The data come from the RNA Mapping Database (RMDB), library OK3TST. The record gives the reactivity of an RNA of 207 nucleotides to 2A3 and DMS. DMS adducts were read by reverse transcription with MarathonRT. Conditions: 150 mM KOAc, 10 mM MgCl2 and 150 mM bicine (pH 8.5), 24 C.
[RMDB]
RNA sequence: GGGAACGACUCGAGUAGAGUCGAAAAUGGGUAAGUGAACAAAAUCAACAAAUCAAGGCAAAAAUGUGCAUUUUCAGCUGGAUGUUUAAUACUGUUUGGUGAAGUAUUGCUUGCUUUAUAUUGAAUUAGGUCUUAAAAGAAGUGACAAUGAAAGCAACUAUCCCCUAUGAUUCGUCAUAGGGGAUAGAAAAGAAACAACAACAACAAC
Reactivity to 2A3 in 0.01 (KOAc 150mM, MgCl2 10mM, bicine 150mM(pH8.5), 24C), signal-to-noise 4, nucleotides 027 to 156: u070g000g030g000u050a060a040g030u040g060a040a020c050a050a090a050a060u120c040a020a070c020a040a110a010u110c070a040a020g040g000c040a050a040a030a080a070u090g050u050g050c050a050u020u020u030u110c020a020g000c010u020g000g020a060u050g020u030u120u070a070a050u050a060c030u030g060u130u090u050g030g000u040g020a010a010g020u080a080u070u070g030c020u030u020g010c000u040u060u020a140u050a020u080u080g030a040a020u100u070a050g030g010u020c050u080u130a100a120a040a000g060a050a020g010u080g070a010c000a010a030u170g040a050a150a010g030c010a000a010
Reactivity to DMS in 0.01 (KOAc 150mM, MgCl2 10mM, bicine 150mM(pH8.5), 24C), signal-to-noise 4, nucleotides 027 to 156: u000g000g010g020u010a050a120g040u010g020a070a300c040a100a060a090a170u010c040a060a110c070a080a070a110u000c030a070a110g010g020c040a040a090a080a100a060u020g010u000g000c040a080u000u000u000u000c050a090g000c080u000g030g010a090u000g030u000u000u000a060a100u000a050c010u020g000u000u010u010g030g020u000g030a060a110g020u000a050u000u000g030c040u010u000g010c010u000u000u000a090u000a120u040u000g010a040a110u000u000a090g030g020u010c020u020u000a030a100a080a130g020a090a090g010u000g010a050c010a050a080u000g000a070a060a080g000c040a050a210